[RMDB]
RNA sequence: GGGAACGACUCGAGUAGAGUCGAAAAGUAUGAUCCUUCGGGAUCAUACAAAUAAUCUCGCCUAUAGCCAGGCGAGAACCAAAGCGGCUAAAGCAAUGGAAAAAAUCGGAUACUUCGGUAUCCGAAACAAUGGAUCGUUGUUCGCAACGAUCCAUUGAAAAGAAACAACAACAACAAC
Reactivity to DMS in 0.01 (KOAc 150mM, MgCl2 10mM, bicine 150mM(pH8.5), 24C), signal-to-noise 2, nucleotides 027 to 126: g030u000a000u010g000a020u000c010c000u010u030c260g040g000g010a000u000c000a040u000a010c010a010a040a050u010a070a110u000c000u000c000g030c000c010u000a120u000a160g030c250c180a010g010g000c000g020a010g020a030a090c000c000a060a000a290g010c050g000g010c120u000a050a080a090g000c010a080a240u000g000g040a030a030a090a120a050a100u000c000g030g010a010u000a000c000u010u010c200g000g000u000a000u000c000c000g000a000a010a050
Reactivity to 2A3 in 0.01 (KOAc 150mM, MgCl2 10mM, bicine 150mM(pH8.5), 24C), signal-to-noise 1, nucleotides 027 to 126: g000u000a010u010g010a010u000c000c000u040u100c240g110g000g010a000u010c000a000u010a000c000a000a000a000u150a020a040u030c010u000c000g010c010c010u130a140u130a090g130c050c020a000g000g000c000g000a000g010a000a010c010c020a000a010a000g040c060g120g000c080u230a100a030a040g020c020a000a100u140g000g000a020a080a050a020a000a060u040c000g000g010a000u000a020c000u020u040c200g070g000u000a000u000c020c000g000a000a000a000